[RMDB]
RNA sequence: GGGAACGACUCGAGUAGAGUCGAAAAAUUCAAACUUAUGAACAAAUAAUUGCUCCAAUUUUAAAACGUCAUGGUGAUGUUGAUUCAAGUGGAUUGAUUAAUUGGUGUAUUGAUGAAUUUACUAAACAAUAGUCCCUCAGUUCGCUGAGGGACUAUUAAAAGAAACAACAACAACAAC
Reactivity to DMS in 0.01 (KOAc 150mM, MgCl2 10mM, bicine 150mM(pH8.5), 24C), signal-to-noise 2, nucleotides 027 to 126: a020u000u000c040a070a090a060c100u020u000a030u000g000a120a100c070a040a020a080u010a050a000u000u000g010c140u000c020c010a040a050u000u010u010u020a030a130a010a050c030g000u000c030a120u030g060g040u010g010a020u000g010u000u000g000a180u030u000c090a050a030g000u010g000g000a010u000u010g000a000u000u000a030a030u000u000g000g000u000g000u010a050u000u000g020a300u000g010a060a000u000u000u000a150c040u020a110a040a090c160
Reactivity to 2A3 in 0.01 (KOAc 150mM, MgCl2 10mM, bicine 150mM(pH8.5), 24C), signal-to-noise 2, nucleotides 027 to 126: a010u010u010c010a020a050a040c040u100u130a040u210g090a150a040c030a110a000a230u140a040a020u040u040g000c020u040c000c030a050a060u000u000u000u130a070a080a050a000c090g020u000c080a090u180g210g210u300g120a020u010g000u060u010g150a130u200u080c120a020a000g050u060g070g020a000u000u010g030a000u000u060a030a010u050u000g030g010u110g020u040a010u040u150g070a100u080g000a010a020u010u000u040a150c120u120a050a150a020c020

Source information:
Structure probing data (DMS and 2A3) for a 177-nucleotide construct. The 2A3 profile rests on 866 reads. It was measured as part of the RMDB library OK1LIB. For DMS, 2,771 sequencing reads were counted.